The data come from the RNA Mapping Database (RMDB), library OK3TST. This 207-nucleotide RNA was probed chemically with 2A3. The 2A3 profile rests on 511 reads. Conditions: 150 mM KOAc, 10 mM MgCl2 and 150 mM bicine (pH 8.5), 24 C. Reactivities are given for positions 27 through 156. High 2A3 reactivity points to a flexible backbone, as in loops and unpaired stretches.

RNA sequence: GGGAACGACUCGAGUAGAGUCGAAAAUCAUCAUGACAUCAAUGAUGUUGUUAUGUGGUCAAUGAUGUCAAUAUGACUCAAGUCACUUUGGGUUUUUCAUGUUUUACAGGAAACUCAGAAAUUCCUCAUGUAAACAAUCAGACAAUUGAGCAAAUUGCGCUCUAGCGCAGUUCGCUGCGCUAGAGCGAAAAGAAACAACAACAACAAC
Reactivity to 2A3 in 0.01 (KOAc 150mM, MgCl2 10mM, bicine 150mM(pH8.5), 24C), signal-to-noise 2, nucleotides 027 to 156: u060c000a000u010c000a000u010g000a040c020a020u040c000a020a140u080g050a030u050g050u140u010g030u000u220a170u300g080u040g000g140u120c070a070a050u040g070a050u040g000u000c000a020a030u170a010u010g120a100c080u050c030a020a070g030u050c010a000c050u060u080u080g000g130g000u000u020u000u060u140c010a010u060g110u040u210u120u230a080c030a000g010g030a000a000a000c010u060c110a080g050a060a130a110u050u000c000c040u020c030a000u040g070u120a000a000a040c030a030a170u130c020a010g020a050c070a060a130u070u020g000a000g040c010a030a070a080u040u070g030